[RMDB]
RNA sequence: GGGAACGACUCGAGUAGAGUCGAAAAAGUUCGCGCUUCCGUGAAACGCGAAAAUCGGACGGUGGCUGCAAGUCGCAUCGCAAAACCGCGGCAAGUGGAGUUAGCGAGAGGAGGCUGGGCUUUGGCUAGAACACACGGUACUUCGGUACCGUGUGAACAUUAGACUGGACUUCGGUCCAGUCUAAUGAAAAGAAACAACAACAACAAC
Reactivity to 2A3 in 0.01 (KOAc 150mM, MgCl2 10mM, bicine 150mM(pH8.5), 24C), signal-to-noise 3, nucleotides 027 to 156: a000g080u030u040c000g010c000g010c050u120u040c070c060g110u090g080a120a070a000c050g010c010g020a030a000a010a070u110c030g010g020a000c040g050g020u050g030g030c030u020g040c090a090a020g020u050c030g000c060a090u030c030g010c060a050a080a050a010c030c030g010c030g100g000c130a120a090g040u040g080g010a070g020u050u120a010g020c010g020a040g000a030g030g040a010g000g040c040u060g010g040g000c010u070u020u060g020g000c020u040a040g070a170a000c000a000c000a000c000g000g000u010a000c000u020u060c130g060g000u000a000c000c000g000u010g000u000g000a000a000
Reactivity to DMS in 0.01 (KOAc 150mM, MgCl2 10mM, bicine 150mM(pH8.5), 24C), signal-to-noise 2, nucleotides 027 to 156: a100g010u010u010c030g040c000g020c010u000u000c030c160g020u010g040a060a000a030c000g000c000g010a040a020a090a100u000c090g010g040a120c050g000g020u000g040g030c030u000g030c080a070a160g030u000c050g050c030a130u010c010g060c030a050a050a120a130c060c050g010c030g010g010c110a070a110g020u020g040g000a090g020u000u000a170g000c030g030a090g000a130g020g000a080g020g010c020u000g000g010g010c030u000u000u000g000g000c060u000a140g020a120a200c000a020c000a010c010g000g020u000a010c010u000u000c250g040g020u000a010c000c000g010u000g010u010g000a010a100
An RNA of 207 nucleotides, treated with 2A3 and DMS and read out base by base. Values are in units of 0.01, from 0 to 300, in steps of 10. The DMS profile rests on 4,135 reads. It was measured as part of the RMDB library M2RFPK. For 2A3, 2,182 sequencing reads were counted.